Overview:
The record gives the reactivity of an RNA of 207 nucleotides to DMS and 2A3. The data come from the RNA Mapping Database (RMDB), library OK3TST. The RNA was probed in 150 mM KOAc, 10 mM MgCl2 and 150 mM bicine (pH 8.5) at 24 C. The DMS profile rests on 2,677 reads.
[RMDB]
RNA sequence: GGGAACGACUCGAGUAGAGUCGAAAAUCUGGCAUGCUGCUCCAUGCUUCAUAUUUAAUAGAAGUGUUUUUCUUCUAGGUUCAAAAGAUGUCGUGAUAAAGGCACAGGUUUUAGCUGGUGGUAGAGGAAAAGGAACAUUUGAAAGUGGCCUCAAAGGCGAGUUACAGCUAUUCGUAGCUGUAACUCGAAAAGAAACAACAACAACAAC
Reactivity to DMS in 0.01 (KOAc 150mM, MgCl2 10mM, bicine 150mM(pH8.5), 24C), signal-to-noise 1, nucleotides 027 to 156: u000c030u010g010g040c020a130u000g040c060u000g010c110u020c060c020a090u000g010c020u000u000c020a170u000a070u000u000u000a090a140u000a050g020a080a090g040u000g000u000u000u000u000u000c000u000u010c000u000a020g020g010u000u020c050a080a120a060a120g020a090u000g030u000c020g000u010g000a120u010a050a060a140g000g020c030a070c060a040g030g000u000u000u010u000a110g010c150u010g030g000u010g020g020u040a050g000a090g010g020a010a040a050a020g000g020a090a060c020a100u000u000u000g010a070a050a150g010u000g000g000c010c040u010c040a050a080a110g020g000
Reactivity to 2A3 in 0.01 (KOAc 150mM, MgCl2 10mM, bicine 150mM(pH8.5), 24C), signal-to-noise 3, nucleotides 027 to 156: u030c010u040g030g000c010a020u020g010c020u060g020c000u030c070c000a020u030g010c030u100u090c060a080u160a270u300u280u190a160a070u010a050g040a050a030g010u000g060u120u180u060u160u030c010u000u000c000u020a020g010g060u030u140c100a040a030a100a020g060a060u020g020u090c020g020u020g080a080u110a120a100a060g010g030c010a000c020a040g050g000u040u030u090u150a030g010c040u060g020g010u010g030g040u010a030g010a020g050g040a020a060a050a020g040g000a050a020c010a110u100u070u080g070a080a060a030g020u010g020g000c020c000u000c030a040a040a000g050g000